[RMDB]
RNA sequence: GGGAACGACUCGAGUAGAGUCGAAAACAAGGACGUUUCGACGUCCUUGAUAGGACCGCCCUUUUGGGCUAAGGCCAUACGGACAGCCGGGUCCACUGGCGAACGCAAACCCCUUCGGGGGUUUGAAUGAAUAUCACCAGUUCGCUGGUGAUAUUCAAAAAGAAACAACAACAACAAC
Reactivity to DMS in 0.01 (KOAc 150mM, MgCl2 10mM, bicine 150mM(pH8.5), 24C), signal-to-noise 3, nucleotides 027 to 126: c010a010a010g000g010a000c000g000u010u010u030c150g030a030c000g010u000c010c000u000u010g000a040u000a110g010g010a050c040c040g000c020c010c020u000u000u000u000g010g010g000c000u010a030a060g020g000c000c000a100u000a090c100g010g010a090c130a180g000c030c020g000g020g000u000c000c020a120c140u010g000g000c020g010a200a110c190g000c000a000a020a010c010c000c000c010u000u010c220g050g000g010g000g020u010u000u000g000a060a080
Reactivity to 2A3 in 0.01 (KOAc 150mM, MgCl2 10mM, bicine 150mM(pH8.5), 24C), signal-to-noise 2, nucleotides 027 to 126: c010a000a030g000g010a000c010g000u000u030u170c240g090a020c020g000u030c000c000u000u000g000a000u010a000g020g000a020c000c000g050c040c000c020u170u180u190u300g000g000g000c050u050a100a060g150g000c000c000a070u060a040c040g050g080a060c060a060g190c040c000g040g030g000u020c040c000a000c080u020g030g020c020g050a130a000c060g000c050a010a000a020c000c010c000c030u020u110c230g030g000g010g000g000u000u000u000g000a010a040